[RMDB]
RNA sequence: GGGAACGACUCGAGUAGAGUCGAAAAGGAGGAAAUGUUUGUCCUUGCAUUUCCUUCUGGUCCUUAUUAUUUGUACGCCGGAUAGAAAAUUUGGUGUACAUAUUAGAAUAAUAAAUUAUCGUGAGCACUGAGAAUGUAACUUCGGUUACAUUCUCAGAAAAGAAACAACAACAACAAC
Reactivity to DMS in 0.01 (KOAc 150mM, MgCl2 10mM, bicine 150mM(pH8.5), 24C), signal-to-noise 2, nucleotides 027 to 126: g020g020a000g000g000a000a020a000u000g010u000u000u010g010u010c110c130u010u000g000c000a010u000u000u000c000c000u000u000c000u000g020g020u000c000c010u000u010a010u000u000a010u000u000u010g000u000a000c000g010c020c020g000g010a010u000a150g010a160a100a180a070u000u000u010g030g040u000g020u000a010c000a030u010a050u010u000a150g000a140a020u000a010a070u010a020a070a240u000u020a070u010c060g000u050g010a160g000c150a230